Structure probing data (2A3) for a 177-nucleotide construct. 2A3 adducts were read by reverse transcription with SuperScript II with manganese. The RNA was probed in 150 mM KOAc, 10 mM MgCl2 and 150 mM bicine (pH 8.5) at 24 C.
RNA sequence: GGGAACGACUCGAGUAGAGUCGAAAACUAGAUUUUUAUUAGCUGAUGUUUCAGCUGCUUAUUUGUUUCCAGAAACUUCAGUGGAACGGUUUGACGUAAUAGAAACUUAUGAAUGGCCUAAAUAAUCCCGUAAACGGAACUUCGGUUCCGUUUACGGAAAAGAAACAACAACAACAAC
Reactivity to 2A3 in 0.01 (KOAc 150mM, MgCl2 10mM, bicine 150mM(pH8.5), 24C), signal-to-noise 2, nucleotides 027 to 126: c020u000a050g000a210u150u000u020u110u110a300u100u200a010g000c000u000g000a000u020g070u010u170u050c050a120g040c120u000g000c010u010u120a100u220u270u050g000u000u000u040c000c000a000g000a010a040a020c000u000u000c060a000g000u090g020g100a090a000c060g000g150u050u050u160g050a050c030g000u000a040a040u000a020g120a020a100a000c130u030u010a110u020g020a020a000u130g020g030c070c000u190a250a180a020u220a090a120u090c000